[RMDB]
An RNA of 177 nucleotides, treated with 2A3 and DMS and read out base by base. In probing experiments dimethyl sulfate is read out at A N1 and C N3, which are open when not base-paired. Source: RMDB library OK2TRN, as collected in RNAgym. The DMS profile rests on 1,322 reads. The RNA was probed in 150 mM KOAc, 10 mM MgCl2 and 150 mM bicine (pH 8.5) at 24 C.
RNA sequence: GGGAACGACUCGAGUAGAGUCGAAAACGCCAAUCCCACCGUGUCGAGAUUGCCAUGCCCGCAGCGGUGGCGCGUGCUGAUGGUCACUUGUUCUCCUGCACCCUGCGUGACUAUUCCGAUGGUGGGGAGUCAGUUACCGGUUCGCCGGUAACUGACUAAAAGAAACAACAACAACAAC
Reactivity to 2A3 in 0.01 (KOAc 150mM, MgCl2 10mM, bicine 150mM(pH8.5), 24C), signal-to-noise 1, nucleotides 027 to 126: c050g070c010c010a030a110u120c040c050c000a000c000c010g120u160g130u170c070g020a060g000a300u020u100g030c050c020a030u100g040c040c030c020g000c040a020g020c070g130g000u110g030g040c040g000c000g000u020g050c000u180g080a180u110g100g020u120c030a000c000u060u120g000u220u000c070u060c040c000u090g000c080a080c010c000c010u000g010c000g040u010g010a040c000u040a070u080u050c000c010g010a000u020g040g010u010g000g000g000g000
Reactivity to DMS in 0.01 (KOAc 150mM, MgCl2 10mM, bicine 150mM(pH8.5), 24C), signal-to-noise 1, nucleotides 027 to 126: c130g000c080c040a150a150u010c020c000c000a020c080c080g040u000g060u010c010g000a070g010a060u000u000g000c020c010a040u000g010c050c270c050g010c040a050g000c080g000g010u000g000g040c050g000c160g010u000g040c120u010g010a120u000g010g000u000c010a030c060u000u000g000u010u010c020u000c020c020u020g030c040a050c020c060c070u010g010c010g020u010g000a060c020u000a080u010u000c010c010g010a050u000g010g030u000g000g020g000g010